Structure probing data (2A3 and DMS) for a 177-nucleotide construct.
[RMDB]
RNA sequence: GGGAACGACUCGAGUAGAGUCGAAAACGGAUCAUUUUCCUUGUGGUUCCUGUGGUUACACCUCGGAAGGCCUCCGCGGACCUGCGGAGAAAAGAAGAAGGGCCCAGAGGGGAAUGAGCCUCGUCGUCUCAAUACAAAAGUUCGCUUUUGUAUUGAGAAAAGAAACAACAACAACAAC
Reactivity to 2A3 in 0.01 (KOAc 150mM, MgCl2 10mM, bicine 150mM(pH8.5), 24C), signal-to-noise 2, nucleotides 027 to 126: c020g020g010a030u010c000a000u000u010u030u070c020c000u040u040g210u130g100g030u110u300c010c000u070g040u080g110g030u050u190a080c110a080c090c010u000c040g080g040a070a030g060g010c000c000u000c010c010g000c040g040g130a300c020c080u110g010c010g000g010a000g010a020a080a000a000g060a030a000g030a030a000g020g000g030c020c000c000a060g030a020g020g000g000g000a010a010u000g000a000g010c020c030u060c040g140u020c000g050u000
Reactivity to DMS in 0.01 (KOAc 150mM, MgCl2 10mM, bicine 150mM(pH8.5), 24C), signal-to-noise 1, nucleotides 027 to 126: c080g000g010a060u000c000a020u000u000u000u000c000c000u000u000g020u010g030g000u000u000c010c020u000g030u000g020g020u010u010a190c110a300c020c090u000c060g000g020a220a140g000g020c150c010u010c010c000g050c030g020g020a150c300c220u000g010c010g020g000a060g000a000a010a040a090g010a300a220g010a070a020g010g000g010c300c000c030a100g000a000g000g000g000g010a010a000u000g010a020g010c030c000u000c050g000u010c120g010u000
DMS adducts were read by reverse transcription with MarathonRT. It was measured as part of the RMDB library VIROID.